[RMDB]
This 177-nucleotide RNA was probed chemically with DMS and 2A3. The reactions ran in a buffer of 150 mM KOAc, 10 mM MgCl2 and 150 mM bicine (pH 8.5), at 24 C. Values cover nucleotides 27 to 126. High DMS reactivity at an A or C suggests that its Watson-Crick edge is free. For 2A3, 1,156 sequencing reads were counted.
RNA sequence: GGGAACGACUCGAGUAGAGUCGAAAAUUGCCGUCGCUCAACGGAUAAAAGGUACCUUAGGGAUAACAGGCUGAUCACGCCCAAGAGUUCAUAUCGACGGCGUGGUUUGGCACCUCGAUGUCGGCUCGUUCAGACCCAAGUUCGCUUGGGUCUGAACAAAAGAAACAACAACAACAAC
Reactivity to DMS in 0.01 (KOAc 150mM, MgCl2 10mM, bicine 150mM(pH8.5), 24C), signal-to-noise 2, nucleotides 027 to 126: u020u020g000c000c010g010u010c020g030c020u010c070a190a100c090g050g010a070u000a060a070a110a090g000g000u000a060c060c000u000u020a200g000g020g020a090u000a040a080c130a160g010g040c000u000g010a010u000c020a000c020g000c010c000c000a050a280g000a000g000u010u030c300a090u050a190u000c000g010a300c300g000g020c000g000u010g020g000u000u020u000g040g000c060a040c010c010u000c110g000a020u000g000u030c000g000g080c010u000c120
Reactivity to 2A3 in 0.01 (KOAc 150mM, MgCl2 10mM, bicine 150mM(pH8.5), 24C), signal-to-noise 2, nucleotides 027 to 126: u030u110g070c000c000g020u070c000g000c000u030c040a020a000c030g010g010a040u160a050a110a030a000g050g040u140a140c010c020u090u090a040g030g010g060a000u110a150a050c040a090g120g050c000u030g000a000u020c010a020c010g000c000c000c000a010a010g030a010g000u160u270c090a060u110a050u120c010g010a010c020g000g000c000g010u000g000g020u030u060u080g000g000c000a020c000c000u000c030g040a040u120g010u020c020g000g000c000u010c020